Description: The record gives the reactivity of an RNA of 177 nucleotides to 2A3 and DMS. High 2A3 reactivity points to a flexible backbone, as in loops and unpaired stretches.
RNA sequence: GGGAACGACUCGAGUAGAGUCGAAAAGGGUCCGGGUUCACCGAAAUCUAUCUCAUUUGCUAGUUAUAAAUUUAUGAAAUUUGCAUAAAUUCUUCAGCUUCCUAUUUGGAGGAAGUGAAGAUGAUCGUGAAGUACCACUGUUCGCAGUGGUACUUCAAAAAGAAACAACAACAACAAC
Reactivity to 2A3 in 0.01 (KOAc 150mM, MgCl2 10mM, bicine 150mM(pH8.5), 24C), signal-to-noise 3, nucleotides 027 to 126: g040g000g020u000c000c000g000g000g010u180u110c040a030c060c010g030a000a000a150u040c020u060a090u000c030u010c010a150u040u050u100g070c080u060a060g070u150u000a170u130a240a170a110u190u100u060a120u030g080a050a100a090u070u110u150g020c020a010u050a070a110a050u050u000c050u000u000c010a070g120c010u000u040c010c000u070a130u270u230u250g180g060a040g000g000a000a000g000u030g000a000a000g000a020u020g040a020u040c060g010
Reactivity to DMS in 0.01 (KOAc 150mM, MgCl2 10mM, bicine 150mM(pH8.5), 24C), signal-to-noise 1, nucleotides 027 to 126: g000g010g000u000c020c100g000g020g000u010u020c160a070c000c020g000a090a180a040u030c000u030a130u010c030u000c060a070u020u040u000g000c010u010a070g000u000u010a140u040a100a040a000u010u000u000a000u040g060a020a040a090u000u090u000g000c020a030u000a000a000a000u050u000c020u000u020c000a080g010c000u010u000c000c000u000a110u040u080u000g000g010a000g000g000a010a000g070u000g000a000a020g010a090u000g000a100u010c170g000